[RMDB]
RNA sequence: GGGAACGACUCGAGUAGAGUCGAAAAGUAUAGCGAAGUUGGAGGCGACGAGCUAUACGAUGAAUCAGCCUCUAUUGAUAUCGGUAUACAGAUCAGCGGCGAUCAGAUACCGUAAUUAGUAGCCGCGAUCCGGAGUGGAGACGCACGACGGUCGUCAACCAUACUACGGUUUCGACCGUAGUAUGGUAAAAGAAACAACAACAACAAC
Reactivity to DMS in 0.01 (KOAc 150mM, MgCl2 10mM, bicine 150mM(pH8.5), 24C), signal-to-noise 2, nucleotides 027 to 156: g030u000a040u000a030g000c010g040a080a240g040u030u000g010g030a160g020g040c000g030a060c040g010a300g020c010u000a010u000a000c020g010a160u000g040a070a060u020c060a170g040c050c010u000c010u010a100u000u000g000a090u000a140u000c000g020g020u000a030u000a130c070a160g030a090u000c010a120g040c170g010g050c080g010a050u000c030a110g000a120u000a000c000c030g070u000a030a050u000u000a150g000u000a060g010c120c020g030c000g000a030u000c000c020g000g010a230g020u000g010g000a180g000a160c090g060c080a090c050g000a110c050g000g000u000c050g020u010c050a110
Reactivity to 2A3 in 0.01 (KOAc 150mM, MgCl2 10mM, bicine 150mM(pH8.5), 24C), signal-to-noise 4, nucleotides 027 to 156: g010u000a000u000a010g000c010g110a150a020g010u130u180g100g000a000g020g040c020g000a030c030g010a030g000c010u000a000u000a000c000g010a020u080g080a010a080u110c060a000g020c020c000u000c010u040a120u050u180g090a090u080a060u220c000g010g000u000a010u010a060c050a090g010a010u020c010a030g040c000g070g000c030g020a000u020c010a030g010a040u010a030c000c000g000u020a040a050u040u130a030g090u010a010g000c040c020g020c030g010a030u030c020c020g050g000a020g010u050g020g080a300g060a120c050g070c070a010c030g010a000c010g010g000u040c030g060u050c070a040